Source information: An RNA of 207 nucleotides, treated with 2A3 and DMS and read out base by base. For 2A3, 4,905 sequencing reads were counted. Conditions: 150 mM KOAc, 10 mM MgCl2 and 150 mM bicine (pH 8.5), 24 C. For DMS, 3,565 sequencing reads were counted.

RNA sequence: GGGAACGACUCGAGUAGAGUCGAAAAAGACGGAAACCCAUCGACUGUCACCAGAUGUUGCAUCACCUGAUCACUGAUGGCUCAACGGUAUCCGGCGGUACAACUGAAUACUUGUAGCUGCCUUUUGAAAAGGAGUUCAUCUUCGGAUGAACUCCAACCUUUCUUUAUUCUUCGGAAUAAAGAAAGGAAAAGAAACAACAACAACAAC
Reactivity to 2A3 in 0.01 (KOAc 150mM, MgCl2 10mM, bicine 150mM(pH8.5), 24C), signal-to-noise 6, nucleotides 027 to 156: a000g060a020c040g030g020a070a080a030c040c010c010a060u090c060g100a080c040u040g020u070c020a020c040c020a020g020a140u080g040u110u100g030c030a030u030c020a040c030c030u060g030a050u070c030a010c060u030g020a040u040g100g010c020u030c060a070a060c030g000g010u040a070u030c030c050g010g000c010g020g020u010a020c010a050a020c050u160g100a190a080u150a190c040u040u050g030u060a030g100c040u020g000c000c000u090u100u070u130g100a080a070a040a040g010g000a000g000u000u000c000a000u000c010u040u050c140g100g000a000u000g000a000a000c000u010c000c000a000a000
Reactivity to DMS in 0.01 (KOAc 150mM, MgCl2 10mM, bicine 150mM(pH8.5), 24C), signal-to-noise 2, nucleotides 027 to 156: a080g020a090c010g000g010a070a100a070c040c010c010a110u010c050g010a110c010u000g000u000c030a140c050c010a060g000a120u000g020u000u000g000c090a100u010c020a060c020c010u010g000a070u000c080a100c020u000g000a110u000g010g020c060u000c070a080a110c010g000g000u000a070u000c020c000g010g020c010g040g030u000a030c080a060a100c040u000g010a130a070u010a010c030u000u010g010u000a020g040c000u000g020c010c050u010u040u000u000g010a070a050a140a210g030g010a040g020u000u000c020a000u000c010u000u000c300g050g000a010u000g000a010a010c010u000c010c000a000a030